[RMDB]
RNA sequence: GGGAACGACUCGAGUAGAGUCGAAAAAGACCACCUCUACGGAGGUGGUCAAGUCACAUAGCUAGUACCAGGUUGCAAUACUAGAGCGUUAGUCCUGGGGCGUACGGUGGCAGUACGCUGCCACCGAUAAAACUUGAAUACUUCGGUAUUCAAGUAAACUGAUUCAGUACUUCGGUACUGAAUCAGUAAAAGAAACAACAACAACAAC
Reactivity to 2A3 in 0.01 (KOAc 150mM, MgCl2 10mM, bicine 150mM(pH8.5), 24C), signal-to-noise 2, nucleotides 027 to 156: a000g010a000c000c000a010c020c000u010c000u010a060c210g150g000a000g010g010u000g020g000u000c000a000a010g000u000c000a020c010a020u070a010g100c010u010a010g020u060a130c000c000a010g000g030u030u010g010c030a020a020u000a070c010u010a020g030a030g090c090g050u070u110a000g060u140c000c000u010g000g010g010g050c070g070u160a040c000g000g000u000g000g010c000a000g030u010a010c260g000c050u010g020c010c000a000c000c030g000a000u030a000a050a010a010c000u000u000g000a000a000u000a000c010u000u070c160g120g000u000a000u010u000c000a000a000g000u000a010a030
Reactivity to DMS in 0.01 (KOAc 150mM, MgCl2 10mM, bicine 150mM(pH8.5), 24C), signal-to-noise 1, nucleotides 027 to 156: a090g030a060c010c000a040c000c010u000c010u010a160c300g150g040a020g000g000u010g010g060u010c010a000a030g000u000c080a130c100a180u000a140g030c020u010a030g000u000a060c020c010a120g010g050u010u010g030c070a030a110u000a020c010u010a040g030a160g040c110g010u000u020a090g000u000c000c000u030g010g000g050g020c120g000u000a040c000g020g010u000g010g030c000a080g010u000a080c220g070c010u000g020c020c000a020c010c000g000a010u000a020a050a090a060c000u010u010g010a000a020u000a020c000u000u010c300g030g000u000a000u000u000c000a000a030g020u000a000a040
The data come from the RNA Mapping Database (RMDB), library M2RFPK. Structure probing data (2A3 and DMS) for a 207-nucleotide construct. For 2A3 the reverse transcriptase was SuperScript II with manganese. The DMS profile rests on 2,433 reads. For 2A3, 1,212 sequencing reads were counted. Conditions: 150 mM KOAc, 10 mM MgCl2 and 150 mM bicine (pH 8.5), 24 C.